[RMDB]
RNA sequence: GGGAACGACUCGAGUAGAGUCGAAAAGCCGCGGCAAGUGGAGUUAGCGAGAAGAGACUAGGCUUUGGUUUCUUCAAGUGAAGAGGUCACCAAUCAGGUGUGGUAGUUACCGUAAAAAAUCCGGAUUAAUGCCUCAGCGCGUUCGCGCGCUGAGGAAGCUUACGGUACAGUUCGCUGUACCGUAAGCAAAAGAAACAACAACAACAAC
Reactivity to 2A3 in 0.01 (KOAc 150mM, MgCl2 10mM, bicine 150mM(pH8.5), 24C), signal-to-noise 1, nucleotides 027 to 156: g030c050c020g010c000g010g070c050a040a100g000u030g020g050a080g020u190u140a020g030c060g030a030g000a040a000g000a030g000a000c000u020a010g150g090c100u110u050u070g020g000u050u000u000c010u020u010c020a080a040g100u090g060a030a010g020a030g040g040u080c020a050c110c040a030a030u120c030a060g050g070u020g000u050g050g020u030a080g020u060u070a090c000c050g040u090a160a000a000a070a000a150u050c020c010g000g020a040u110u300a110a070u180g080c020c000u010c000a000g020c000g000c030g000u020u060c110g020c000g000c000g000c100u000g000a000g000g000a000a000

Structure probing data (2A3) for a 207-nucleotide construct. Source: RMDB library M2RFPK, as collected in RNAgym. The RNA was probed in 150 mM KOAc, 10 mM MgCl2 and 150 mM bicine (pH 8.5) at 24 C.